[RMDB]
RNA sequence: GGGAACGACUCGAGUAGAGUCGAAAAUUUCCCCUCUGCGCUUUUACAAAUCUAGAUAAGUUGAAGUUCAAAGAGGUCUGUAAAACUACUACUGGUAUACCUGAAUACAACUUUAUCAUCUACGACUAAAGGAAUGGGUUCGCCCAUUCCAAAAGAAACAACAACAACAAC
Reactivity to 2A3 in 0.01 (KOAc 150mM, MgCl2 10mM, bicine 150mM(pH8.5), 24C), signal-to-noise 7, nucleotides 027 to 129: u020u010u020c000c000c000c000u050c040u060g010c030g050c040u070u110u050u080a120c060a040a150a040u010c020u050a040g030a060u030a100a060g010u010u030g040a100a020g020u040u020c050a050a090a060g110a060g040g020u020c040u060g190u130a040a070a090a040c030u050a010c020u030a020c040u120g060g000u050a020u030a070c000c000u020g010a050a000u050a050c020a030a010c000u040u080u040a090u080c040a030u010c010u000a020c110g100a030c040u120a020a050a090
Reactivity to DMS in 0.01 (KOAc 150mM, MgCl2 10mM, bicine 150mM(pH8.5), 24C), signal-to-noise 5, nucleotides 027 to 129: u020u020u020c040c040c000c000u020c090u020g040c100g050c000u000u040u090u070a070c150a090a220a060u040c040u080a050g020a000u010a040a030g040u030u000g030a060a070g030u060u020c000a080a190a140g030a040g070g030u030c130u040g000u060a060a010a130a100c030u000a090c050u020a060c100u000g000g000u050a040u000a000c020c050u000g030a040a040u040a110c230a050a030c030u040u010u030a090u080c050a070u020c040u000a030c170g010a000c070u040a050a070a160
Structure probing data (2A3 and DMS) for a 170-nucleotide construct. For 2A3 the reverse transcriptase was SuperScript II with manganese. The 2A3 profile rests on 16,934 reads. The reactions ran in a buffer of 150 mM KOAc, 10 mM MgCl2 and 150 mM bicine (pH 8.5), at 24 C. The DMS profile rests on 10,781 reads.